[RMDB]
RNA sequence: GGGAACGACUCGAGUAGAGUCGAAAAGAUCUUCGCCGAUCCGAAACGCUAGCAAACAGCCCGCAUCAUGUCGUCUCCUAACUUCGACGUGGUGAAAUACUGAGCUUAUGCGAGUAAGCCUGUUAGCAAUAGAUCAGAACGUUCGCGUUCUGAUCAACUGAACUGAUUGAUUCGUCAAUCAGUUCAGAAAAGAAACAACAACAACAAC
Reactivity to 2A3 in 0.01 (KOAc 150mM, MgCl2 10mM, bicine 150mM(pH8.5), 24C), signal-to-noise 7, nucleotides 027 to 156: g020a020u030c010u080u080c100g040c070c030g020a030u020c040c040g060a070a050a030c080g010c030u030a020g010c030a070a030a150c040a060g030c010c010c020g020c010a010u010c000a000u010g010u010c010g020u010c050u090c090c090u130a160a190c080u070u040c010g010a000c000g010u000g000g000u020g020a030a020a010u170a040c040u030g020a030g030c000u030u020a020u090g090c040g030a050g050u020a010a000g000c000c020u030g010u040u030a010g000c020a080a150u050a190g000a000u000c000a000g000a000a000c000g010u060u090c230g010c000g130u000u000c020u000g000a000u000c000a000a010
Reactivity to DMS in 0.01 (KOAc 150mM, MgCl2 10mM, bicine 150mM(pH8.5), 24C), signal-to-noise 2, nucleotides 027 to 156: g010a070u000c050u000u000c170g030c130c090g000a090u010c010c010g000a110a050a100c080g010c020u010a040g050c000a070a080a130c190a120g020c020c020c040g010c020a040u040c020a040u000g020u000c000g010u000c080u000c200c090u000a090a070c130u000u010c010g000a020c010g040u000g030g010u000g000a040a060a160u000a130c040u000g010a150g000c000u000u000a160u010g000c210g020a150g010u010a070a110g010c030c010u010g010u000u000a100g010c050a110a120u010a100g020a010u010c000a010g000a010a000c000g040u010u000c300g010c040g010u000u000c010u000g000a000u000c010a000a050